[RMDB]
RNA sequence: GGGAACGACUCGAGUAGAGUCGAAAAUAUCAUGAGCGUGUUGCACAAUGGUGAAGAAGCUCUUGAGGAGUAUUUAAUGGUUUACACUUACGUAAAGAAAAAGUCAUUUCACACCCCAACAAAUUACAUUCCUGACUGAGUUCGCUCAGUCAGGAAUAAAAGAAACAACAACAACAAC
Reactivity to DMS in 0.01 (KOAc 150mM, MgCl2 10mM, bicine 150mM(pH8.5), 24C), signal-to-noise 1, nucleotides 027 to 126: u000a050u000c080a120u010g020a020g010c010g020u000g020u000u000g030c050a010c090a150a190u020g000g010u060g010a110a130g010a170a230g020c060u000c070u000u000g000a080g000g000a120g000u000a000u000u000u000a010a060u000g000g000u000u000u000a040c140a080c060u010u010a090c190g040u000a080a040a020g010a020a110a040a040a060g000u000c060a050u010u000u010c080a060c090a140c010c020c010c030a100a110c160a010a060a060u000u000a110c180